[RMDB]
RNA sequence: GGGAACGACUCGAGUAGAGUCGAAAAGAUAUGGAUCCACUAGGGAGCUGGUAUCGGAAACGAUACUCAGCGUUGAUCUAGGGAUCCUAAGUCAAAACAUACUCGUGCGUUCGCGCACGAGUAUGAACUGAUGAACACUGUUCGCAGUGUUCAUCAGAAAAGAAACAACAACAACAAC
Reactivity to DMS in 0.01 (KOAc 150mM, MgCl2 10mM, bicine 150mM(pH8.5), 24C), signal-to-noise 2, nucleotides 027 to 126: g000a010u000a090u010g000g000a010u010c000c000a170c040u000a000g000g000g000a030g010c000u030g010g000u000a000u000c010g030g010a040a040a080c000g010a010u000a000c010u010c010a000g020c030g000u000u000g010a060u010c000u000a000g010g000g010a000u000c010c000u000a000a040g000u000c000a090a130a140a300c030a000u000a000c000u000c010g040u000g000c000g010u010u030c300g010c010g000c000a010c020g010a000g000u000a010u000g000a070a220
Reactivity to 2A3 in 0.01 (KOAc 150mM, MgCl2 10mM, bicine 150mM(pH8.5), 24C), signal-to-noise 2, nucleotides 027 to 126: g010a000u060a020u060g000g000a000u030c000c010a290c290u010a020g020g040g030a030g020c000u010g000g030u010a000u000c020g000g040a010a010a010c020g000a000u010a010c070u150c300a000g010c000g020u060u100g000a010u000c010u010a010g000g000g000a010u000c000c010u000a020a000g000u000c030a080a030a090a120c010a000u000a000c000u010c000g000u000g030c000g050u020u080c300g000c010g010c180a000c000g000a020g000u010a000u000g000a000a020